Source: RMDB library OK2TST, as collected in RNAgym.
An RNA of 177 nucleotides, treated with 2A3 and DMS and read out base by base.
RNA sequence: GGGAACGACUCGAGUAGAGUCGAAAACACCGAGCUGGCGACCAAGCACGGGCCGGUCAUCACGUUCUCCGCCGGCAAGAACAAGGGCAGCGUCAAAGUAUUCCGCGAGGACACGGACAUUCCGGCGGCUAAUGACGCCAUUCGUGGCGUCAUUAGCAAAAGAAACAACAACAACAAC
Reactivity to 2A3 in 0.01 (KOAc 150mM, MgCl2 10mM, bicine 150mM(pH8.5), 24C), signal-to-noise 1, nucleotides 027 to 126: c090a000c020c000g020a040g020c010u040g070g020c030g050a100c000c080a090a010g070c060a050c090g000g070g000c000c030g060g020u010c030a100u090c010a050c040g010u060u000c010u000c030c030g000c000c010g020g010c020a000a000g070a020a030c070a040a090g020g050g050c010a020g000c050g000u010c060a100a110a000g060u040a190u170u010c010c000g040c050g050a040g070g030a010c020a020c080g010g000a030c030a090u060u040c010c000g000g010c040g000
Reactivity to DMS in 0.01 (KOAc 150mM, MgCl2 10mM, bicine 150mM(pH8.5), 24C), signal-to-noise 2, nucleotides 027 to 126: c160a150c080c000g000a070g020c060u000g000g000c020g010a070c060c050a070a070g030c080a130c110g000g000g050c020c020g010g010u000c060a100u000c040a110c070g010u020u000c020u000c040c080g030c010c030g000g000c080a110a120g000a050a070c070a100a130g000g010g020c030a020g000c030g010u000c060a100a070a070g000u000a130u000u030c030c040g000c030g030a100g000g000a080c170a030c080g020g000a120c240a140u000u000c030c000g020g030c030g030
For DMS the reverse transcriptase was MarathonRT. The reactions ran in a buffer of 150 mM KOAc, 10 mM MgCl2 and 150 mM bicine (pH 8.5), at 24 C.